[RMDB]
RNA sequence: GGGAACGACUCGAGUAGAGUCGAAAAUGCAAGCCUGAAAACGCUGCCUCUGGAGGCACCAGAAAAGCUGCUCUGCCCUGACUGCAGCAUGGUGUGGGUCGGCUAGGGCAGCCCAUGCGCAGGAGGGAUAACAGGUGGGUUUCGACCCACCUGUUAUAAAAGAAACAACAACAACAAC
Reactivity to 2A3 in 0.01 (KOAc 150mM, MgCl2 10mM, bicine 150mM(pH8.5), 24C), signal-to-noise 1, nucleotides 027 to 126: u140g000c040a040a060g050c020c030u120g070a110a010a000a060c050g020c020u010g040c010c000u010c030u060g100g000a060g080g000c020a050c040c000a020g070a040a120a010a000g010c020u020g010c020u010c030u080g050c000c000c040u070g130a180c010u030g050c000a140g050c030a060u020g020g120u140g000u040g120g200g010u000c020g130g070c110u100a080g000g040g000c000a010g000c000c000c000a010u020g000c000g030c000a010g010g030a010g000g040g020
Reactivity to DMS in 0.01 (KOAc 150mM, MgCl2 10mM, bicine 150mM(pH8.5), 24C), signal-to-noise 2, nucleotides 027 to 126: u010g000c090a110a120g000c010c020u030g000a080a080a110a120c160g000c090u010g020c020c040u010c100u010g010g030a130g030g000c070a050c050c030a080g000a080a130a090a110g010c030u000g000c030u000c100u000g030c040c020c020u010g020a180c020u020g000c000a080g030c040a060u000g010g020u010g030u000g010g030g000u000c080g020g010c150u000a060g000g000g010c010a200g000c020c030c000a000u010g010c030g000c000a020g010g000a170g000g000g010